[RMDB]
RNA sequence: GGGAACGACUCGAGUAGAGUCGAAAAGGUUAAGUGAUCCGUUUUGGGCAAAAGUGGCAUUAAUCGGCAUUCAAGUAUGGCUUGGAUUCCCAUUUGUCUUUGCACUGUUCACUGGAGUACUGCAAAGGUAACGUGCCUUUUUCGAAAGGCACGUUACAAAAGAAACAACAACAACAAC
Reactivity to 2A3 in 0.01 (KOAc 150mM, MgCl2 10mM, bicine 150mM(pH8.5), 24C), signal-to-noise 4, nucleotides 027 to 126: g060g030u100u080a000a030g030u050g110a090u040c010c020g000u030u040u150u100g110g040g020c070a010a040a050a070g040u110g020g020c010a010u000u090a040a030u070c030g010g000c020a000u020u010c000a000a010g030u060a190u260g250g010c010u010u010g000g000a010u010u000c000c000c000a000u070u080u060g030u000c000u030u010u020g020c040a040c040u040g040u130u070c080a100c180u110g080g040a050g090u040a070c010u030g010c010a040a050a020g070
Reactivity to DMS in 0.01 (KOAc 150mM, MgCl2 10mM, bicine 150mM(pH8.5), 24C), signal-to-noise 2, nucleotides 027 to 126: g010g030u000u030a050a040g030u000g000a090u070c050c010g100u000u000u050u000g000g040g000c220a050a020a100a020g010u000g000g020c030a090u020u000a060a010u020c100g000g060c170a070u000u000c030a010a050g000u010a080u000g010g000c010u010u010g000g000a050u000u000c000c000c040a170u030u000u010g000u000c000u000u020u020g000c000a090c150u000g030u090u010c050a140c260u030g090g000a140g000u000a020c130u010g020c040a000a020a020g010
Description
Structure probing data (2A3 and DMS) for a 177-nucleotide construct. For DMS, 3,092 sequencing reads were counted. DMS adducts were read by reverse transcription with MarathonRT. It was measured as part of the RMDB library OK1LIB. The reactions ran in a buffer of 150 mM KOAc, 10 mM MgCl2 and 150 mM bicine (pH 8.5), at 24 C.